[RMDB]
RNA sequence: GGGAACGACUCGAGUAGAGUCGAAAAAAGAAAGGGAUUCAGUACUACAAAAGGAAAAUUGUAUUCGUACUUCGAAGGCACCAAAUUCCAUCAAGCAGCAAAAGACAUGGCGGAGAUAAAGGUCCUGUGUAAAGAGGUGAUUCGUCACCUCUUUACAAAAAGAAACAACAACAACAAC
Reactivity to DMS in 0.01 (KOAc 150mM, MgCl2 10mM, bicine 150mM(pH8.5), 24C), signal-to-noise 3, nucleotides 027 to 126: a040a030g010a070a080a100g020g000g000a060u010u000c050a040g040u000a040c010u010a030c040a020a050a070a120g010g010a050a060a100a080u000u000g000u000a060u000u000c130g010u000a030c070u010u010c100g000a090a050g000g010c060a070c030c040a030a050a060u000u000c030c020a070u010c100a060a090g000c050a050g000c060a040a070a090a070g000a060c070a040u000g010g010c050g040g020a040g010a050u000a030a070a080g000g030u010c010c050u000g020
Reactivity to 2A3 in 0.01 (KOAc 150mM, MgCl2 10mM, bicine 150mM(pH8.5), 24C), signal-to-noise 2, nucleotides 027 to 126: a010a030g140a010a040a010g050g000g010a030u110u070c010a020g010u020a010c010u020a010c060a010a030a050a010g170g080a060a030a050a080u080u040g030u030a060u060u120c050g020u010a020c000u010u060c040g030a020a050g070g000c010a020c090c010a030a090a080u100u040c020c010a010u040c010a050a010g010c020a000g000c040a100a020a050a000g090a080c020a010u080g020g000c020g040g000a040g000a040u160a070a120a020g000g020u000c000c000u080g000